Description
The data come from the RNA Mapping Database (RMDB), library OK2TST. This 177-nucleotide RNA was probed chemically with DMS and 2A3. Values cover nucleotides 27 to 126.
RNA sequence: GGGAACGACUCGAGUAGAGUCGAAAAACGCAGAAUGGCGCGUGCGGCGAACUUUUGAACAUCGAUUACAAUACGCCCACGCCGAGCGAGGAGUGGAUUCCGGAUAUUGUGGUUUACGUGAAACGCCCAUAAUGCGAGUAUUCGUACUCGCAUUAUGAAAAGAAACAACAACAACAAC
Reactivity to DMS in 0.01 (KOAc 150mM, MgCl2 10mM, bicine 150mM(pH8.5), 24C), signal-to-noise 9, nucleotides 027 to 126: a090c050g010c040a080g010a120a090u010g020g010c110g020c030g020u000g010c160g020g010c020g010a080a100c180u000u000u000u000g010a070a080c110a140u020c160g000a100u010u000a090c070a030a040u000a120c020g000c090c010c010a030c020g010c010c030g010a070g010c080g010a090g000g010a070g020u000g000g000a100u010u000c090c040g000g010a110u010a080u000u000g010u000g010g000u000u000u000a060c110g010u000g000a070a060a100c140g010c050c050
Reactivity to 2A3 in 0.01 (KOAc 150mM, MgCl2 10mM, bicine 150mM(pH8.5), 24C), signal-to-noise 7, nucleotides 027 to 126: a000c060g010c030a040g070a250a100u120g090g010c060g010c020g050u020g020c130g000g010c020g030a130a110c070u080u100u050u110g030a040a020c020a160u180c120g200a200u020u160a070c020a020a030u030a050c020g010c000c000c000a000c000g000c010c000g000a020g020c020g040a070g030g020a030g010u060g030g060a080u110u040c040c000g010g010a070u080a050u090u110g020u040g010g080u030u060u040a040c050g020u040g080a090a030a040c040g010c000c020